[RMDB]
RNA sequence: GGGAACGACUCGAGUAGAGUCGAAAAGAUAUGGAAGGUAGACAUGCUAUAGAGGUCGGAAACGACCUUUAUAGCAACAGCUACUUCCUAAGUCAAAGGCCCUGAAUAGUUCGCUAUUCAGGGCCAAGCAGAUAGUGACGUUCGCGUCACUAUCUGCAAAAGAAACAACAACAACAAC
Reactivity to DMS in 0.01 (KOAc 150mM, MgCl2 10mM, bicine 150mM(pH8.5), 24C), signal-to-noise 1, nucleotides 027 to 126: g010a080u000a300u000g010g020a040a030g010g000u000a010g000a040c100a300u000g000c000u010a010u000a030g000a020g040g010u020c010g000g000a090a110a200c020g000a000c000c000u010u000u000a000u010a020g000c040a000a040c290a100g010c000u000a000c010u020u000c000c000u020a060a170g000u020c040a040a130a120g000g010c000c000c010u010g000a000a000u030a020g000u000u040c300g020c000u000a000u000u000c000a020g000g000g000c020c000a000a040
An RNA of 177 nucleotides, treated with DMS and read out base by base. DMS adducts were read by reverse transcription with MarathonRT.